[RMDB]
RNA sequence: GGGAACGACUCGAGUAGAGUCGAAAACUGGCAGAAGGCCAGCAAGUUGAAUUCACCAUUGAAAAUGGUGCGAAAGGCCCAGCAGCUGCUAACGUAACUGCAAUCUAAGCUUAAUUGCUUAACUGAUCGAACUGCUAUAGUUCGCUAUAGCAGUUCGAAAAGAAACAACAACAACAAC
Reactivity to 2A3 in 0.01 (KOAc 150mM, MgCl2 10mM, bicine 150mM(pH8.5), 24C), signal-to-noise 4, nucleotides 027 to 126: c000u000g030g000c010a010g090a300a040g300g010c010c000a020g000c030a060a070g040u150u180g050a030a030u060u040c010a010c010c030a030u030u100g110a090a070a010a000u030g000g000u020g030c020g080a080a050a080g030g020c000c000c020a010g020c000a000g010c030u040g000c030u110a170a020c100g050u050a040a040c010u050g010c020a020a030u050c030u120a000a040g000c000u050u090a110a050u300u140g000c010u000u020a030a090c020u010g010a020u000
Reactivity to DMS in 0.01 (KOAc 150mM, MgCl2 10mM, bicine 150mM(pH8.5), 24C), signal-to-noise 2, nucleotides 027 to 126: c000u000g020g010c000a130g040a100a220g050g000c000c040a030g070c130a090a030g010u000u000g000a210a290u000u010c000a020c020c050a000u000u000g000a120a060a110a040u000g010g000u000g000c110g000a000a010a130g000g010c000c000c000a060g000c060a040g020c060u000g010c010u020a130a120c210g010u010a000a110c010u040g000c060a180a070u170c150u000a050a040g000c050u000u000a060a070u030u010g000c000u000u000a010a030c130u000g040a300u050